[RMDB]
RNA sequence: GGGAACGACUCGAGUAGAGUCGAAAAAAGGUGCUAUCAUUAGACUUUAACAACGAAUUGAUUAAGGCUGCUCCAAUUGUUGGGACGGGUGUAGCAGAUGUUAGUGCUCGACUGUUCUUUGGGUUAAUGAUUUGGUAAACUUCGGUUUACCAAAUCAAAAAGAAACAACAACAACAAC
Reactivity to DMS in 0.01 (KOAc 150mM, MgCl2 10mM, bicine 150mM(pH8.5), 24C), signal-to-noise 2, nucleotides 027 to 126: a070a060g010g010u010g010c040u000a050u000c030a090u000u000a120g020a160c030u000u000u000a100a060c060a040a090c170g010a080a060u000u000g010a120u010u010a080a060g010g010c030u000g020c020u000c040c030a060a070u010u020g020u000u000g000g010g000a070c150g000g010g040u010g020u000a080g000c060a080g010a070u000g000u010u000a040g000u000g000c040u000c030g000a070c050u020g000u000u000c030u000u000u000g030g020g000u000u000a090a130
An RNA of 177 nucleotides, treated with DMS and read out base by base.